[RMDB]
RNA sequence: GGGAACGACUCGAGUAGAGUCGAAAACUCAAUCACUACGGUGAUUGAGAAUGCUUACGCCUCAAUCAAGCUUGACUCGAGUGCCUCUAGCAGAUAUAGACUGAAACAUUUAGUAUGGUCAAGCAGGGAGCAACAGCUCGAGUACGCUCGAGCUGAACGAUAAAUGAUUAUUCGUAAUCAUUUAUCGAAAAGAAACAACAACAACAAC
Reactivity to DMS in 0.01 (KOAc 150mM, MgCl2 10mM, bicine 150mM(pH8.5), 24C), signal-to-noise 3, nucleotides 027 to 156: c010u000c000a010a010u010c020a010c000u000a160c300g080g030u000g000a030u000u000g020a000g000a060a060u000g020c030u000u000a120c100g000c010c020u010c040a130a110u000c120a110a130g030c020u000u010g010a040c010u000c050g010a070g020u010g000c020c020u000c070u010a090g000c060a090g050a140u000a150u010a130g030a140c050u020g000a070a040a060c030a080u000u000u010a050g050u000a080u010g000g010u000c010a010a020g040c000a160g020g020g000a050g000c020a110a190c030a040g000c010u000c000g000a040g000u000a080c280g030c010u000c000g020a050g020c000u000g020a000a090
Reactivity to 2A3 in 0.01 (KOAc 150mM, MgCl2 10mM, bicine 150mM(pH8.5), 24C), signal-to-noise 7, nucleotides 027 to 156: c000u000c000a000a000u000c000a000c010u030a020c260g100g000u000g000a000u000u000g000a000g000a020a050u080g010c020u050u080a060c090g080c010c010u070c050a090a180u090c060a100a030g020c000u020u020g020a010c000u030c130g030a030g050u080g040c040c010u070c040u070a030g010c040a020g130a060u150a050u080a140g140a090c040u070g060a070a130a030c030a020u070u110u060a080g040u080a110u220g030g000u010c000a000a000g000c000a030g030g040g010a060g000c040a030a090c000a010g000c000u000c000g000a000g010u020a020c220g000c040u000c010g000a000g000c000u010g010a020a010

An RNA of 207 nucleotides, treated with DMS and 2A3 and read out base by base. For 2A3, 7,191 sequencing reads were counted. Reactivities are rounded to 0.1 and cut off at 0 and 3. Reactivities are given for positions 27 through 156.